[RMDB]
Chemical mapping of a 207-nucleotide RNA with 2A3. It was measured as part of the RMDB library OK3TST. 2A3 adducts were read by reverse transcription with SuperScript II with manganese. Conditions: 150 mM KOAc, 10 mM MgCl2 and 150 mM bicine (pH 8.5), 24 C.

RNA sequence: GGGAACGACUCGAGUAGAGUCGAAAACGAUCAGUACGUUCGCGUACUGAUCGAAGCUACUGGAGACAGUAGCAAGUCUAAGACCUUGUUAGGAGGAAACAAGGAAAAAUGGAGGAAGGGCGGACCUCCAUACUUAGACAACCUCCAACCGCCCAAAACGGAUGCAUAGUUUCGACUAUGCAUCCGUAAAAGAAACAACAACAACAAC
Reactivity to 2A3 in 0.01 (KOAc 150mM, MgCl2 10mM, bicine 150mM(pH8.5), 24C), signal-to-noise 2, nucleotides 027 to 156: c010g000a000u000c000a000g000u000a000c010g030u020u060c200g000c000g130u000a000c000u000g000a000u000c000g000a000a000g010c000u000a000c000u000g020g000a060g020a050c000a000g000u000a000g000c010a010a030g000u000c000u000a000a050g010a190c000c010u000u010g010u020u040a110g040g080a040g040g100a100a010a000c000a000a010g060g000a060a130a050a050a000u040g010g000a020g040g010a060a280g020g000g000c020g030g000a180c000c000u000c000c000a010u010a000c010u000u010a000g000a010c010a030a100c040c020u070c050c010a020a000c000c010g000c000c000c000a000a010a000